[RMDB]
RNA sequence: GGGAACGACUCGAGUAGAGUCGAAAAUAAUCCGGCUAAACUCCACACCGGUGGGCCUCAACGCCGGGUCUGGCAACAGACAGUGGAGUCAUUAACGAGGAUCGCGUUUUGCAGGGUUACUUUGCAGAGCGCUAAAAAAUAGGUAACUCGCCUGUCAGGACAUAUGUAACUUCGGUUACAUAUGUCCAAAAGAAACAACAACAACAAC
Reactivity to 2A3 in 0.01 (KOAc 150mM, MgCl2 10mM, bicine 150mM(pH8.5), 24C), signal-to-noise 1, nucleotides 027 to 156: u120a000a070u020c000c000g010g000c080u140a230a140a000c000u010c010c000a020c000a010c020c010g000g040u020g010g010g060c040c040u100c080a120a010c010g000c000c000g030g000g020u020c000u000g000g010c010a040a020c000a070g000a020c000a000g000u000g000g010a010g060u030c010a100u070u190a080a080c140g010a010g050g030a010u030c030g000c000g000u000u000u000u000g000c000a010g060g000g050u190u120a130c020u120u040u020g000c000a000g000a000g000c000g000c000u000a000a000a000a000a000a020u120a020g020g000u020a060a060c010u040c090g040c020c010u080g090u080c060a090